[RMDB]
This 177-nucleotide RNA was probed chemically with DMS and 2A3. For 2A3 the reverse transcriptase was SuperScript II with manganese. It was measured as part of the RMDB library OK2TRN. The RNA was probed in 150 mM KOAc, 10 mM MgCl2 and 150 mM bicine (pH 8.5) at 24 C. Values cover nucleotides 27 to 126.

RNA sequence: GGGAACGACUCGAGUAGAGUCGAAAAUCACAAGCAAGAAUAUCAACCACCCUAGUUGCGUUUGGCUGGAAGCGCAAGAGGAUGACGAGGUAGGCUUUCCGGUCAGGCCACAAGUACCUCUAAGGCCACGAAGAAUCUAAUUCGUUAGAUUCUUCGUAAAAGAAACAACAACAACAAC
Reactivity to DMS in 0.01 (KOAc 150mM, MgCl2 10mM, bicine 150mM(pH8.5), 24C), signal-to-noise 9, nucleotides 027 to 126: u000c030a090c100a090a080g010c070a050a070g010a090a070u010a090u000c080a070a140c080c040a100c040c020c020u000a090g020u000u000g010c050g020u000u000u000g000g010c020u000g000g010a140a060g020c010g000c040a050a050g000a060g010g010a080u010g000a100c110g010a110g010g010u000a100g020g010c030u000u000u010c050c030g000g000u000c070a060g000g010c000c020a060c110a060a130g010u000a050c030c010u000c040u010a090a090g000g010c050c040
Reactivity to 2A3 in 0.01 (KOAc 150mM, MgCl2 10mM, bicine 150mM(pH8.5), 24C), signal-to-noise 7, nucleotides 027 to 126: u060c010a020c020a060a020g050c030a060a060g080a170a070u100a030u200c040a050a070c030c030a060c020c010c010u100a100g090u050u050g020c020g010u030u070u060g040g000c020u010g030g010a020a010g000c020g000c030a020a020g030a030g120g040a080u160g040a040c050g020a030g010g090u050a050g050g020c020u090u070u020c030c020g030g010u040c030a010g080g010c010c000a040c000a070a010g040u040a070c000c010u020c010u050a090a040g110g000c030c000